Chemical mapping of a 177-nucleotide RNA with 2A3 and DMS. In probing experiments dimethyl sulfate is read out at A N1 and C N3, which are open when not base-paired. For DMS the reverse transcriptase was MarathonRT.
RNA sequence: GGGAACGACUCGAGUAGAGUCGAAAAGAUCGUCCACUCCGAUCGAGCCACUAGGAGCUAUCGGAACUCUUAGCGGAGUGACCAAAUCACUCGACUUCAGUUGGACAUCGUGAGAUCGAGGUCCAAAGACGAAUGAUGCCUUCGGGUAUCGUUCGUCAAAAGAAACAACAACAACAAC
Reactivity to 2A3 in 0.01 (KOAc 150mM, MgCl2 10mM, bicine 150mM(pH8.5), 24C), signal-to-noise 9, nucleotides 027 to 126: g020a020u050c040g030u030c060c020a040c020u000c010c010g040a090u100c070g020a040g050c020c020a050c030u040a030g040g010a030g030c020u100a110u250c100g070g060a060a050c010u000c000u040u030a020g040c040g040g000a010g000u010g010a020c020c050a040a060a050u050c010a010c030u020c010g080a070c030u110u070c100a130g030u070u050g030g000a010c010a030u030c030g040u080g100a110g010a060u190c010g000a010g000g030u000c000c000a020a030a010
Reactivity to DMS in 0.01 (KOAc 150mM, MgCl2 10mM, bicine 150mM(pH8.5), 24C), signal-to-noise 9, nucleotides 027 to 126: g000a020u010c050g000u000c040c050a040c030u000c080c010g000a080u020c080g000a090g000c020c030a300c040u000a020g000g000a040g010c050u020a110u030c200g000g030a150a170c010u000c010u000u000a020g000c070g010g010a020g010u000g000a060c040c100a090a080a220u010c030a040c020u000c010g000a080c070u010u020c080a090g020u000u000g000g010a030c030a030u000c020g020u000g000a150g010a100u020c000g010a040g000g010u000c010c010a010a040a080